[RMDB]
RNA sequence: GGGAACGACUCGAGUAGAGUCGAAAAGAAGCACGGCUUGUGUGUGAUCCUUUUGGAUUGCACUGUAUAUCCUACGCUGUGCGAAAGUAGGCCCAUUGUGGCGAGAGCCACUUACAGUACAGCUUAUUAUGACGCAUCGCUGUACGAACGAUGCUGACAUAUCCCUGACCUUCGGGUCAGGGAUAUGAAAAGAAACAACAACAACAAC
Reactivity to 2A3 in 0.01 (KOAc 150mM, MgCl2 10mM, bicine 150mM(pH8.5), 24C), signal-to-noise 2, nucleotides 027 to 156: g100a070a030g000c020a010c000g000g000c000u130u130g110u000g000u000g030u030g180a000u020c010c000u090u220u300u300g000g000a020u000u010g000c020a010c010u000g050u010a260u040a040u160c010c010u050a030c040g050c010u000g010u010g000c010g000a000a020a000g140u230a030g100g000c000c000c010a020u020u200g000u000g000g000c030g030a020g000a000g020c010c030a010c000u040u050a060c020a000g060u000a010c000a020g010c020u100u030a030u180u110a150u300g130a070c090g000c020a060u080c080g000c030u020g030u070a000c010g010a040a000c060g010a010u010g010c010u010g030a010
Reactivity to DMS in 0.01 (KOAc 150mM, MgCl2 10mM, bicine 150mM(pH8.5), 24C), signal-to-noise 2, nucleotides 027 to 156: g020a140a100g000c000a020c010g010g040c000u010u010g020u000g000u000g030u000g010a030u000c000c000u000u000u000u000g070g010a040u010u000g050c000a000c010u010g030u000a080u000a150u000c160c050u000a140c190g040c000u000g040u000g010c000g050a030a030a170g020u000a000g040g010c000c000c020a220u000u000g040u000g000g040c080g010a230g000a300g000c040c000a050c000u000u010a050c120a170g020u000a090c060a100g010c010u010u000a140u000u000a150u000g020a180c070g030c020a050u000c040g000c010u030g020u010a120c040g020a040a040c030g000a100u000g010c000u000g030a220

Structure probing data (2A3 and DMS) for a 207-nucleotide construct. For DMS the reverse transcriptase was MarathonRT. The RNA was probed in 150 mM KOAc, 10 mM MgCl2 and 150 mM bicine (pH 8.5) at 24 C. The 2A3 profile rests on 984 reads.